[RMDB]
RNA sequence: GGGAACGACUCGAGUAGAGUCGAAAAGACCCGUGCAAUGCUGUAGCUAACGCGUUAAGUAUCCCGCCUGGGGAGUACGUUCGCAAGAAUGAAACUCAAAGGAAUUGACGGGGGCCCGCACAAGCGGGGCUAAGAUGUGCUUCGGCACAUCUUAGCCAAAAGAAACAACAACAACAAC
Reactivity to DMS in 0.01 (KOAc 150mM, MgCl2 10mM, bicine 150mM(pH8.5), 24C), signal-to-noise 4, nucleotides 027 to 126: g000a190c000c000c010g010u000g010c070a060a050u010g020c020u000g020u010a180g000c060u000a100a180c190g010c020g010u000u020a150a070g000u000a070u000c010c000c020g010c050c020u000g000g000g010g010a030g000u000a070c070g000u000u000c000g020c290a110a110g000a030a030u000g000a110a090a060c010u010c010a070a150a100g000g000a060a080u010u010g010a050c040g000g000g000g020g010c050c040c030g020c030a080c230a080a080g010c030g000g000
Reactivity to 2A3 in 0.01 (KOAc 150mM, MgCl2 10mM, bicine 150mM(pH8.5), 24C), signal-to-noise 3, nucleotides 027 to 126: g050a040c010c010c000g020u070g050c040a060a050u050g000c020u050g040u250a030g010c010u080a120a070c060g010c000g120u140u130a070a030g020u040a120u040c020c000c010g040c030c040u070g020g000g080g030a000g020u020a020c040g000u000u020c020g020c030a000a060g010a020a050u090g040a200a040a020c020u030c050a070a120a020g020g000a070a100u070u050g010a030c010g000g000g000g000g050c010c010c010g070c000a070c040a230a060g050c020g040g050